RNA sequence: GGGAACGACUCGAGUAGAGUCGAAAACAAAAUAUCUGAUGAAGAUAUGCAAAUGAUGAACUAUAAAGUAACAGUUAAAAAUGAAGACCCAUAUACAGUUGCGAAAGAUUAUUUAAAAGCAAAAGGGAACAUGUCGAUCAUUCGUGAUCGACAUGUUAAAAGAAACAACAACAACAAC
Reactivity to DMS in 0.01 (KOAc 150mM, MgCl2 10mM, bicine 150mM(pH8.5), 24C), signal-to-noise 2, nucleotides 027 to 126: c110a100a100a100a070u000a010u010c010u000g000a180u070g000a230a000g000a010u000a020u010g000c140a080a070a060u040g020a110u000g000a100a030c030u000a120u020a080a040a070g000u040a040a100c060a050g020u000u000a030a060a020a080a060u040g020a040a080g000a190c000c050c010a010u010a100u030a060c180a100g050u000u000g000c020g000a100a080a070g000a100u020u040a070u010u010u010a030a050a090a070g010c030a020a020a040a170g000g020g020
Reactivity to 2A3 in 0.01 (KOAc 150mM, MgCl2 10mM, bicine 150mM(pH8.5), 24C), signal-to-noise 2, nucleotides 027 to 126: c040a000a080a050a000u050a050u000c010u010g010a090u150g010a050a020g000a010u120a000u120g040c020a050a100a170u300g070a120u230g020a070a000c040u090a120u160a300a180a000g090u060a010a010c040a020g050u060u170a120a000a170a030a070u150g080a010a000g050a100c000c000c000a010u130a020u100a150c010a010g000u020u000g070c040g050a110a000a230g010a040u070u090a120u120u170u120a180a020a000a050g030c030a010a010a010a000g000g000g000